The record gives the reactivity of an RNA of 177 nucleotides to DMS and 2A3. For 2A3, 2,732 sequencing reads were counted. Source: RMDB library OK2TST, as collected in RNAgym. The reactions ran in a buffer of 150 mM KOAc, 10 mM MgCl2 and 150 mM bicine (pH 8.5), at 24 C. DMS adducts were read by reverse transcription with MarathonRT.
RNA sequence: GGGAACGACUCGAGUAGAGUCGAAAAAUGGUCUGCGCGGUCGCCGUCGCGACGAUGUACGUUGCCCAGCCCGUGCUCGCGCAGAUGGGGCGAGACCUGGGAGUGCCCGAGUCCGACCUGGGCUGGACCCUAUCCAGUCGUUCGCGACUGGAUAGGGAAAAGAAACAACAACAACAAC
Reactivity to DMS in 0.01 (KOAc 150mM, MgCl2 10mM, bicine 150mM(pH8.5), 24C), signal-to-noise 3, nucleotides 027 to 126: a060u010g000g010u000c000u010g000c010g020c010g020g000u010c040g030c020c300g020u010c130g040c000g010a020c000g010a110u020g010u000a040c030g010u000u010g000c050c020c010a030g000c010c020c010g010u000g000c000u000c020g000c020g010c010a030g000a010u000g010g010g000g030c020g010a160g010a030c020c010u040g000g010g010a300g000u010g010c030c000c000g000a050g000u000c000c000g010a170c040c020u000g000g000g010c000u000g000g000a160
Reactivity to 2A3 in 0.01 (KOAc 150mM, MgCl2 10mM, bicine 150mM(pH8.5), 24C), signal-to-noise 2, nucleotides 027 to 126: a030u150g070g000u040c010u050g020c000g000c030g040g000u070c020g000c060c080g180u120c220g000c010g010a030c030g020a030u280g030u050a040c080g030u060u150g010c000c000c040a000g000c000c010c000g030u040g020c020u010c030g020c000g000c000a000g020a050u070g020g000g030g000c030g010a090g000a050c020c060u080g000g000g060a160g190u190g210c040c000c000g010a000g030u060c020c010g030a180c030c040u050g030g010g000c000u000g040g020a040